The record gives the reactivity of an RNA of 177 nucleotides to 2A3 and DMS. For DMS the reverse transcriptase was MarathonRT. Conditions: 150 mM KOAc, 10 mM MgCl2 and 150 mM bicine (pH 8.5), 24 C. The 2A3 profile rests on 2,413 reads. The data come from the RNA Mapping Database (RMDB), library M2PK90. For 2A3 the reverse transcriptase was SuperScript II with manganese.
[RMDB]
RNA sequence: GGGAACGACUCGAGUAGAGUCGAAAAGACGAACGAAAACACAAAUGUUCCACGGUGCAGAAGGGUCCCUCACAUGAGGAUCACCCAUGUAACUCGCACAGGAUAUGCUUUUGGGAAAAAGAGAGAAAUGACAGUGCAUAUUCGUAUGCACUGUCAUAAAAGAAACAACAACAACAAC
Reactivity to 2A3 in 0.01 (KOAc 150mM, MgCl2 10mM, bicine 150mM(pH8.5), 24C), signal-to-noise 2, nucleotides 027 to 126: g070a010c080g020a080a030c040g040a100a010a090a000c080a010c020a030a100a070u110g010u030u020c000c040a010c120g100g020u020g000c020a020g000a180a060g020g010g020u020c010c030c000u020c010a220c050a200u300g010a010g030g010a040u120c040a000c010c010c010a000u060g050u040a070a070c020u000c070g000c000a000c010a010g020g020a020u040a000u180g010c030u020u060u080u090g020g060g000a090a080a010a070a000g050a010g000a000g040a000a230
Reactivity to DMS in 0.01 (KOAc 150mM, MgCl2 10mM, bicine 150mM(pH8.5), 24C), signal-to-noise 3, nucleotides 027 to 126: g020a130c050g000a100a110c070g000a020a010a080a060c100a090c140a060a100a060u010g000u000u000c010c050a100c160g020g010u010g000c010a040g010a120a100g000g010g010u000c140c020c000u000c000a190c240a160u030g010a000g000g000a010u010c200a020c000c000c000a110u000g040u000a050a080c090u000c090g000c030a020c020a050g010g000a120u000a010u000g000c020u000u020u000u000g010g000g010a080a020a020a010a040g020a120g020a070g020a040a090